[RMDB]
RNA sequence: GGGAACGACUCGAGUAGAGUCGAAAAGAUAUGGAAAUAUGGCCAUGUGCGGUUUAGCGAAGAACAUACUGGGUCGGAAACGACCUUAUGGGAGCUAAACCGCACAUGGCCUGUAUUUCCUAAGUCACAUGUAUCGUACGUUCGCGUACGAUACAUGAAAAGAAACAACAACAACAAC
Reactivity to DMS in 0.01 (KOAc 150mM, MgCl2 10mM, bicine 150mM(pH8.5), 24C), signal-to-noise 2, nucleotides 027 to 126: g000a040u000a300u030g000g000a010a000a010u000a040u000g000g000c000c010a010u000g010u010g020c000g030g030u000u000u010a010g000c000g020a200a170g020a110a180c010a020u000a010c300u000g020g000g020u000c000g020g000a130a160a260c020g030a010c000c000u000u010a000u000g000g000g000a090g030c000u000a010a000a010c010c000g020c000a000c010a000u000g010g000c070c010u000g010u000a000u000u000u000c000c000u000a070a130g010u000c040a240